Source: RMDB library TTRDEL, as collected in RNAgym. An RNA of 177 nucleotides, treated with 2A3 and DMS and read out base by base. Values cover nucleotides 27 to 126. DMS adducts were read by reverse transcription with MarathonRT. For 2A3 the reverse transcriptase was SuperScript II with manganese. For 2A3, 3,694 sequencing reads were counted. Conditions: 150 mM KOAc, 10 mM MgCl2 and 150 mM bicine (pH 8.5), 24 C.
RNA sequence: GGGAACGACUCGAGUAGAGUCGAAAAGAUAUGGAGUGUGAGAGCUUUUGACGACUAUCGGAAACGAUAGAAUCGAUAAGCUCCACACUCCUAAGUCAAAAGGAUACACACUUCGGUGUGUAUCCAACAUCCCAAGAGAGUUCGCUCUCUUGGGAUGAAAAGAAACAACAACAACAAC
Reactivity to 2A3 in 0.01 (KOAc 150mM, MgCl2 10mM, bicine 150mM(pH8.5), 24C), signal-to-noise 2, nucleotides 027 to 126: g030a000u050a010u100g000g000a010g000u000g020u000g040a300g020a000g100c010u110u160u300u270g130a040c000g010a060c010u000a000u000c010g010g060a050a040a030c010g010a010u010a010g050a100a100u070c000g060a100u050a300a050g000c000u000c000c000a010c000a000c000u020c000c000u000a010a000g000u010c000a000a000a000a180g000g000a000u010a010c020a000c020a010c060u070u250c230g050g000u000g020u020g000u000a000u000c010c010a000a000
Reactivity to DMS in 0.01 (KOAc 150mM, MgCl2 10mM, bicine 150mM(pH8.5), 24C), signal-to-noise 3, nucleotides 027 to 126: g000a030u010a300u020g000g010a010g030u000g030u000g000a150g010a000g010c000u000u000u010u000g000a220c070g010a060c050u000a000u010c000g010g000a100a070a120c000g000a010u000a000g000a300a100u000c000g000a060u010a050a040g010c000u000c000c000a000c000a000c000u000c000c000u000a000a040g010u000c040a040a050a090a090g020g000a010u010a000c000a000c000a000c000u000u020c160g010g020u000g040u000g000u000a000u000c000c000a030a080